Background: The data come from the RNA Mapping Database (RMDB), library OK2TST. This 177-nucleotide RNA was probed chemically with 2A3 and DMS. For 2A3, 14,205 sequencing reads were counted. Conditions: 150 mM KOAc, 10 mM MgCl2 and 150 mM bicine (pH 8.5), 24 C. Reactivities are given for positions 27 through 126. For DMS the reverse transcriptase was MarathonRT.
RNA sequence: GGGAACGACUCGAGUAGAGUCGAAAACUUAGAUGUUCGUGCCAUUUCUCAGCUCACAGAUUACUUUAUUUUUGCUGAAGGGAAUGUGGGUGUACAUGUAAAAGCUUUAGCAGAUACGAUUGUACAACCUUCUACUAUAGUUCGCUAUAGUAGAAGGAAAAGAAACAACAACAACAAC
Reactivity to 2A3 in 0.01 (KOAc 150mM, MgCl2 10mM, bicine 150mM(pH8.5), 24C), signal-to-noise 8, nucleotides 027 to 126: c030u080u070a060g050a170u170g040u120u070c070g050u090g060c010c010a060u050u090u000c040u010c010a020g010c010u000c020a040c010a030g090a170u060u170a060c040u110u120u090a120u120u240u090u130u170g090c050u040g020a050a040g020g000g030a030a060u040g010u030g030g010g010u080g010u020a020c010a010u050g000u060a000a010a020a060g010c000u110u200u220a050g000c020a000g010a060u040a030c040g100a150u050u190g020u020a020c010a020a040
Reactivity to DMS in 0.01 (KOAc 150mM, MgCl2 10mM, bicine 150mM(pH8.5), 24C), signal-to-noise 9, nucleotides 027 to 126: c040u000u010a100g000a100u010g010u000u000c060g020u010g010c040c040a110u000u000u000c020u000c060a160g000c020u000c040a040c060a050g000a110u000u000a100c090u000u000u010a080u010u010u010u010u000g020c180u000g000a040a040g010g000g010a060a080u000g010u000g000g010g010u000g010u000a020c020a030u000g000u000a020a030a220a220g000c010u000u000u010a110g020c010a030g010a300u000a020c040g000a090u010u000g010u000a040c050a100a160